[RMDB]
RNA sequence: GGGAACGACUCGAGUAGAGUCGAAAAGAGCGAUUUAAUAUUAGAUCGUCGCGAUCUAAACAGUCCGACACGCUGUCGCGGGGCAGCACCUCCCGGGAAAGGGCCCUUGGUGCGCAUUCGAAAGAAAACGAGGACUAUUAUUCGUAAUAGUCCUCGUAAAAGAAACAACAACAACAAC
Reactivity to 2A3 in 0.01 (KOAc 150mM, MgCl2 10mM, bicine 150mM(pH8.5), 24C), signal-to-noise 2, nucleotides 027 to 126: g050a020g000c000g000a050u010u110u200a250a130u200a260u220u110a020g020a040u050c010g090u100c050g040c190g100a010u050c020u030a040a060a020c010a010g060u050c000c030g000a040c030a030c130g010c040u020g010u040c020g010c030g070g000g000g000c080a100g000c000a030c000c000u020c020c030c030g040g030g000a100a170a060g000g030g050c030c000c020u000u040g090g030u030g000c040g000c040a050u230u220c030g120a060a060a070g080a010a140a050
Reactivity to DMS in 0.01 (KOAc 150mM, MgCl2 10mM, bicine 150mM(pH8.5), 24C), signal-to-noise 4, nucleotides 027 to 126: g010a140g010c010g010a070u010u010u000a080a180u010a180u010u000a020g020a030u000c020g010u000c150g010c130g020a030u000c020u010a050a060a140c150a080g020u000c030c010g000a090c090a080c250g000c030u000g010u000c030g010c060g010g000g010g010c050a060g020c030a070c030c040u010c010c020c020g020g010g020a050a050a120g000g010g000c080c010c020u010u000g000g010u000g000c040g020c110a130u000u000c040g000a070a080a170g010a030a040a110